This 207-nucleotide RNA was probed chemically with 2A3. Values cover nucleotides 27 to 156. 2A3 adducts were read by reverse transcription with SuperScript II with manganese. For 2A3, 868 sequencing reads were counted. Conditions: 150 mM KOAc, 10 mM MgCl2 and 150 mM bicine (pH 8.5), 24 C.

RNA sequence: GGGAACGACUCGAGUAGAGUCGAAAAAGCACGGUUUUUGAGGACACAUUUUGUCCGUGCGGUAAUGCCCUCCUUUACACUUUCUCGCAUGGUGCGGGAGUGUGGAGAGGAAACAAAAGCUAGUCUCGAUAGGCGGUUAACUUCGGUUAACCGCCAACCCAUCCACGUACUUCGGUACGUGGAUGGGAAAAGAAACAACAACAACAAC
Reactivity to 2A3 in 0.01 (KOAc 150mM, MgCl2 10mM, bicine 150mM(pH8.5), 24C), signal-to-noise 1, nucleotides 027 to 156: a000g000c000a000c000g000g040u040u000u000u000u020g110a130g010g040a010c010a000c000a070u000u020u020u000g000u000c000c020g000u000g000c040g010g100u100a090a010u180g000c000c000c020u030c000c010u080u120u030a000c000a000c020u070u130u050c000u000c020g040c020a140u300g220g000u300g190c020g000g000g000a000g000u000g000u000g000g000a030g020a030g000g000a000a060a000c000a000a000a000a000g140c030u070a080g020u000c030u020c060g050a130u120a140g000g020c000g010g010u000u000a000a000c000u020u050c090g020g010u000u000a000a000c010c000g000c000c000a000a000